RNA sequence: GGGAACGACUCGAGUAGAGUCGAAAAGAAGUGGCAGGGAAUUGCCCCACAAGCUCGUUCUACCAACAUUAGUUUGGGUAGUUCGAGCGAUUAGUCUUGACGAGCGUUUUCUCGCGUCUUGACGAGAGGGAUGGAGCAGGUUCGCCUGUUCCAUCCCAAAAGAAACAACAACAACAAC
Reactivity to 2A3 in 0.01 (KOAc 150mM, MgCl2 10mM, bicine 150mM(pH8.5), 24C), signal-to-noise 6, nucleotides 027 to 126: g100a080a030g020u060g040g000c050a030g030g030g100a060a150u030u060g070c010c000c010c000a080c030a040a010g000c000u000c000g010u000u000c000u010a000c010c020a030a040c020a110u140u100a030g130u030u080u060g080g010g000u000a000g000u000u000c000g000a010g000c000g000a000u000u050a030g000u000c000u000u030g010a010c010g020a040g070c040g030u030u010u100u040c080u040c010g010c000g030u000c000u000u020g010a010c030g000a010g030a050
Reactivity to DMS in 0.01 (KOAc 150mM, MgCl2 10mM, bicine 150mM(pH8.5), 24C), signal-to-noise 6, nucleotides 027 to 126: g010a080a090g020u010g000g010c030a040g000g010g020a100a100u010u000g000c040c000c040c070a080c170a110a140g000c000u000c000g000u000u000c010u000a000c000c000a040a030c040a250u040u050a030g010u030u010u020g010g010g000u010a000g010u000u000c010g000a000g000c000g000a010u020u010a060g000u010c000u000u000g000a030c020g010a090g000c110g000u010u000u010u010c020u010c030g020c020g010u010c010u000u010g000a050c000g010a110g010a180
Chemical mapping of a 177-nucleotide RNA with 2A3 and DMS. The RNA was probed in 150 mM KOAc, 10 mM MgCl2 and 150 mM bicine (pH 8.5) at 24 C. 2A3 adducts were read by reverse transcription with SuperScript II with manganese. For DMS the reverse transcriptase was MarathonRT.